[RMDB]
An RNA of 177 nucleotides, treated with DMS and 2A3 and read out base by base. DMS adducts were read by reverse transcription with MarathonRT.
RNA sequence: GGGAACGACUCGAGUAGAGUCGAAAAGAUAUGGAUCCGUACCCAGGGAGAACCGGAUCGGAAACGAUCCGAGUUCAUCGAUCUGGACGGAUCCUAAGUCAAAUCGCGUGGGUUCGCCCACGCGAAAGCUAAUCGUUAAGUUCGCUUAACGAUUAGCAAAAGAAACAACAACAACAAC
Reactivity to DMS in 0.01 (KOAc 150mM, MgCl2 10mM, bicine 150mM(pH8.5), 24C), signal-to-noise 5, nucleotides 027 to 126: g000a020u000a100u020g000g010a010u000c000c000g000u010a180c300c010c020a020g000g000g000a130g020a010a010c010c000g010g010a000u000c000g000g010a030a020a050c000g000a020u000c000c000g000a060g010u000u000c010a180u000c240g010a120u000c000u000g000g010a070c000g000g010a020u010c000c000u000a000a050g000u000c020a140a110a130u000c010g010c000g030u000g000g000g010u000u010c300g000c000c000c000a010c000g000c010g000a000a040a090
Reactivity to 2A3 in 0.01 (KOAc 150mM, MgCl2 10mM, bicine 150mM(pH8.5), 24C), signal-to-noise 5, nucleotides 027 to 126: g010a000u010a000u060g000g000a000u000c010c010g050u100a300c050c030c040a020g070g080g050a300g000a010a000c000c000g000g010a000u000c010g000g000a020a020a000c000g000a000u000c010c000g000a040g010u010u000c020a030u300c110g120a160u040c000u000g000g020a000c000g000g000a000u000c000c000u000a000a000g000u000c010a010a020a230u050c000g000c010g010u010g000g010g060u050u100c300g150c030c000c000a000c000g000c000g010a000a000a000